An RNA of 177 nucleotides, treated with DMS and 2A3 and read out base by base. Values cover nucleotides 27 to 126.

[RMDB]
RNA sequence: GGGAACGACUCGAGUAGAGUCGAAAAGCCGAUCUGGCCAUCGUAGAUGACACGCCAAGCGGCCGUGAUACCCGUUCGAUACCGGAUACGCAGGCUCACCUGGCGGGUGGCGGUUUCCUUACCAGCCUCAUGUCAGGUCUUUCGAGACCUGACAUGAAAAAGAAACAACAACAACAAC
Reactivity to DMS in 0.01 (KOAc 150mM, MgCl2 10mM, bicine 150mM(pH8.5), 24C), signal-to-noise 2, nucleotides 027 to 126: g010c000c010g030a060u060c060u010g010g020c040c040a030u000c020g000u010a140g010a080u000g000a070c050a140c120g000c010c020a080a070g020c180g010g020c040c030g060u000g010a150u000a060c050c060c030g000u000u000c080g010a160u010a060c220c020g000g020a020u000a040c120g010c070a090g060g000c010u000c080a060c050c260u000g010g000c030g000g020g010u000g020g010c040g010g020u010u000u010c020c070u020u000a080c050c040a060g020c180c040
Reactivity to 2A3 in 0.01 (KOAc 150mM, MgCl2 10mM, bicine 150mM(pH8.5), 24C), signal-to-noise 1, nucleotides 027 to 126: g040c010c010g000a120u040c030u050g090g010c070c020a040u060c040g190u060a110g020a230u160g010a050c040a010c100g000c000c020a040a010g090c060g000g000c040c000g150u010g040a090u100a130c020c010c020g020u100u100c080g060a050u060a200c070c030g030g000a030u000a080c060g040c110a120g010g050c060u040c020a070c040c010u000g010g030c000g010g000g000u020g000g000c050g020g000u020u000u020c020c020u000u010a080c040c010a060g050c030c030